[RMDB]
RNA sequence: GGGAACGACUCGAGUAGAGUCGAAAACGCUUCGGGUUUUAGGGCCAGUUCCGCUAACAGAGAUUCCUGCGAUCGCCGAGGUGGACGUGCCCGCUGCGCUCCAGGAGCUCGGGCGCAGAGUCAUGGAUACACACCUACCUUUCGAGGUAGGUGUGUAAAAAGAAACAACAACAACAAC
Reactivity to DMS in 0.01 (KOAc 150mM, MgCl2 10mM, bicine 150mM(pH8.5), 24C), signal-to-noise 2, nucleotides 027 to 126: c050g020c060u010u000c030g020g000g010u000u000u000u000a130g000g000g000c030c040a110g000u010u000c020c020g020c080u000a050a170c290a090g000a060g000a120u000u000c050c090u010g010c140g030a070u000c040g000c020c050g000a260g000g010u000g020g010a050c060g000u000g010c000c020c000g010c050u000g000c020g010c040u000c000c070a130g000g020a120g030c030u010c090g010g000g000c010g020c040a040g010a090g010u010c120a100u000g000g020a280